Source information:
Structure probing data (2A3 and DMS) for a 177-nucleotide construct. The RNA was probed in 150 mM KOAc, 10 mM MgCl2 and 150 mM bicine (pH 8.5) at 24 C. For DMS, 4,647 sequencing reads were counted.

RNA sequence: GGGAACGACUCGAGUAGAGUCGAAAAGCCCAGCGCCAGGGCGGCCCCGAUCGCGGCGUUGGCCUCGUCGCAAUCCGCGUAUGCCACCAGUCGGGCGUCGGUUUUGGCGACACGGGACAUAUCGCUCGCAUAGAAUAGACUUCGGUCUAUUCUAUGCAAAAGAAACAACAACAACAAC
Reactivity to 2A3 in 0.01 (KOAc 150mM, MgCl2 10mM, bicine 150mM(pH8.5), 24C), signal-to-noise 3, nucleotides 027 to 126: g030c000c020c000a010g040c020g000c010c000a010g060g010g000c000g010g000c000c020c000c000g020a050u100c040g030c140g170g020c100g020u020u050g030g040c020c000u110c070g120u090c010g010c050a040a120u150c070c070g030c010g030u100a070u170g040c030c020a030c000c020a020g050u040c030g000g030g020c090g030u010c010g060g080u020u020u100u040g010g000c000g030a010c020a020c040g020g020g010a020c030a040u250a030u090c070g030c090u070c060
Reactivity to DMS in 0.01 (KOAc 150mM, MgCl2 10mM, bicine 150mM(pH8.5), 24C), signal-to-noise 4, nucleotides 027 to 126: g010c000c000c000a150g000c010g010c020c030a050g000g000g010c000g000g020c040c000c010c030g010a020u000c140g020c100g010g000c210g010u000u000g020g010c020c110u010c100g020u010c020g020c030a110a070u000c090c110g020c040g020u010a050u000g010c060c020a090c070c070a150g010u000c070g010g000g010c220g040u000c020g000g020u000u000u000u000g010g020c000g000a060c060a060c110g010g000g000a100c050a090u010a070u000c070g000c090u020c120